RNA sequence: GGGAACGACUCGAGUAGAGUCGAAAAUAACAGGAGAGUAGAUGAUUCGCGUUAAGUGUGUGUGAAUGGGAUGUCGUCACACAACGAAGCGACAGCGCGGUGAAUCAUUGCAUCCGCUCCAAAACAAGAAGGUUUAAGUAUUCGUACUUAAACCUUCAAAAGAAACAACAACAACAAC
Reactivity to DMS in 0.01 (KOAc 150mM, MgCl2 10mM, bicine 150mM(pH8.5), 24C), signal-to-noise 9, nucleotides 027 to 126: u000a110a130c210a160g010g000a020g010a020g000u000a300g010a010u000g000a020u000u000c000g020c010g010u000u010a040a060g010u010g010u000g010u000g000u000g000a020a050u010g010g010g020a010u000g000u010c220g010u000c000a010c010a000c010a020a030c070g000a070a080g010c020g010a150c300a100g010c020g010c040g000g010u010g000a020a010u000c010a020u000u000g010c020a020u000c000c000g000c010u000c000c000a060a060a090a090c240a080a090
Reactivity to 2A3 in 0.01 (KOAc 150mM, MgCl2 10mM, bicine 150mM(pH8.5), 24C), signal-to-noise 4, nucleotides 027 to 126: u100a020a030c030a030g010g000a010g000a000g010u020a010g010a010u000g000a000u010u000c010g000c000g020u030u080a040a020g010u010g000u010g000u000g000u000g030a020a020u010g000g010g000a010u020g030u060c090g000u000c020a000c000a000c000a020a020c020g010a030a010g000c020g110a090c060a060g020c000g000c010g000g030u010g010a000a000u000c000a010u000u010g000c010a000u000c000c010g000c000u000c000c000a040a050a030a030c100a070a060
An RNA of 177 nucleotides, treated with DMS and 2A3 and read out base by base. For DMS, 13,247 sequencing reads were counted. Reactivities are given for positions 27 through 126. For DMS the reverse transcriptase was MarathonRT. It was measured as part of the RMDB library M2PK90.